[RMDB]
RNA sequence: GGGAACGACUCGAGUAGAGUCGAAAAGUCAGCUUGUUCGCAAGCUGACAAACUGGACACACCCACACCCAGGCGAAGCCGUGUCAAAAUGGGUCUGGGUAAAAAGGACACUGUUCGCAGUGUCCAAUCCCUUUUUAAAGUUCGCUUUAAAAAGGGAAAAAGAAACAACAACAACAAC
Reactivity to DMS in 0.01 (KOAc 150mM, MgCl2 10mM, bicine 150mM(pH8.5), 24C), signal-to-noise 5, nucleotides 027 to 126: g000u000c000a010g000c000u000u000g010u000u010c230g030c010a010a010g010c000u000g000a000c000a010a040a070c080u010g020g010a090c150a080c130a130c000c000c010a050c160a020c010c000c000a040g000g010c100g000a090a110g010c090c070g020u000g020u000c180a050a060a160a120u000g000g000g000u000c110u000g010g010g010u000a010a030a040a080a030g000g010a010c000a000c000u000g000u010u030c190g020c020a020g010u000g000u000c000c000a020a050
Reactivity to 2A3 in 0.01 (KOAc 150mM, MgCl2 10mM, bicine 150mM(pH8.5), 24C), signal-to-noise 3, nucleotides 027 to 126: g000u000c000a000g000c010u040u010g040u070u170c200g040c120a010a010g010c000u000g000a000c000a000a000a000c010u060g130g020a020c030a010c000a010c120c000c000a000c010a000c010c000c010a020g000g040c030g080a090a030g130c070c060g090u100g040u110c040a070a170a040a100u060g000g020g000u000c000u020g000g000g010u020a010a060a010a000a000g000g000a000c000a000c000u010g020u030u040c190g000c110a010g000u000g000u000c000c000a000a000
Structure probing data (DMS and 2A3) for a 177-nucleotide construct. For 2A3, 5,422 sequencing reads were counted. For DMS the reverse transcriptase was MarathonRT. The RNA was probed in 150 mM KOAc, 10 mM MgCl2 and 150 mM bicine (pH 8.5) at 24 C. 2A3 adducts were read by reverse transcription with SuperScript II with manganese.